[RMDB]
Background
Structure probing data (2A3 and DMS) for a 177-nucleotide construct. The RNA was probed in 150 mM KOAc, 10 mM MgCl2 and 150 mM bicine (pH 8.5) at 24 C. For 2A3 the reverse transcriptase was SuperScript II with manganese. The DMS profile rests on 3,635 reads. For 2A3, 2,685 sequencing reads were counted.
RNA sequence: GGGAACGACUCGAGUAGAGUCGAAAACUAAAUACGGUAACAAUGACGACCGUGUAGAUGAUAUCGCAGUUGAUUUAGUAGAACGCUUCAUGACUAAAUUACGUAGUCAUAAAACAUAUCGUGAUUCGAUGAUAACAUCCUUCGGGAUGUUAUCAUCAAAAGAAACAACAACAACAAC
Reactivity to 2A3 in 0.01 (KOAc 150mM, MgCl2 10mM, bicine 150mM(pH8.5), 24C), signal-to-noise 5, nucleotides 027 to 126: c040u050a090a060a010u090a020c030g010g030u060a160a130c080a130a180u240g090a080c090g020a010c000c010g020u010g000u030a030g010a100u100g050a030u050a030u150c090g010c100a060g010u160u130g100a110u030u040u110a090g030u020a040g050a110a040c060g050c030u120u090c070a040u080g040a010c000u010a020a040a180u080u030a070c060g010u010a000g030u000c020a040u150a030a090a020a030c080a080u180a050u050c010g030u040g020a050u030u150c100
Reactivity to DMS in 0.01 (KOAc 150mM, MgCl2 10mM, bicine 150mM(pH8.5), 24C), signal-to-noise 3, nucleotides 027 to 126: c010u000a000a050a030u020a040c010g000g020u000a060a070c130a110a100u010g020a080c300g000a050c060c030g020u030g000u010a090g000a070u000g020a030u000a260u000c060g010c070a040g000u020u000g000a000u000u020u000a050g000u010a020g000a040a050c110g010c150u040u010c100a140u020g000a000c000u030a050a060a090u000u000a040c120g000u020a040g000u000c000a020u020a000a000a050a030c130a130u020a080u020c010g020u000g010a060u000u000c190